Annotation
This 207-nucleotide RNA was probed chemically with DMS and 2A3. For DMS, 3,983 sequencing reads were counted. High 2A3 reactivity points to a flexible backbone, as in loops and unpaired stretches. For 2A3, 3,613 sequencing reads were counted.
RNA sequence: GGGAACGACUCGAGUAGAGUCGAAAAAGAAAUUCGACCCCUUUCAGAAAAUCUGCCCUAAAAGAUGGGAAGGAGGCAGGCAGGGAGCAAUAAUGGAAACAGGGUGGCUGGAUUUGGAUGUUCCUGACUGCUUAGGAACGGAGGGCAUCCAGAGAGGACUUUAGUACGUUUUCGAACGUACUAAAGUAAAAGAAACAACAACAACAAC
Reactivity to DMS in 0.01 (KOAc 150mM, MgCl2 10mM, bicine 150mM(pH8.5), 24C), signal-to-noise 2, nucleotides 027 to 156: a110g000a060a060a110u010u020c030g000a170c020c020c010c050u000u010u010c050a190g010a120a110a050a090u000c040u000g010c020c000c020u020a100a090a110a150g000a070u000g020g010g020a080a060g030g010a090g040g030c020a050g030g040c040a120g000g000g010a080g000c000a060a080u010a100a060u000g020g020a100a060a110c060a050g000g000g020u000g020g000c000u000g010g010a180u000u020u000g010g010a070u000g000u000u000c000c010u000g000a190c070u000g010c060u000u000a120g020g000a050a100c030g020g030a080g000g000g010c040a030u010c010c000a100g020a040g030a130g020g000
Reactivity to 2A3 in 0.01 (KOAc 150mM, MgCl2 10mM, bicine 150mM(pH8.5), 24C), signal-to-noise 4, nucleotides 027 to 156: a000g040a020a020a010u070u030c030g040a060c020c040c010c050u020u090u070c090a050g040a040a110a010a050u010c010u040g030c020c010c000u100a130a150a050a030g090a070u110g020g000g000a010a030g020g010a030g010g030c030a010g030g000c020a010g000g020g050a050g040c010a000a090u140a150a040u120g070g000a030a060a040c050a060g020g000g040u030g050g000c020u030g030g040a070u070u010u070g040g010a010u030g010u150u260c000c000u050g090a140c030u060g040c040u120u150a040g020g040a080a000c010g000g010a010g000g000g010c000a000u000c010c000a010g000a000g010a010g060g050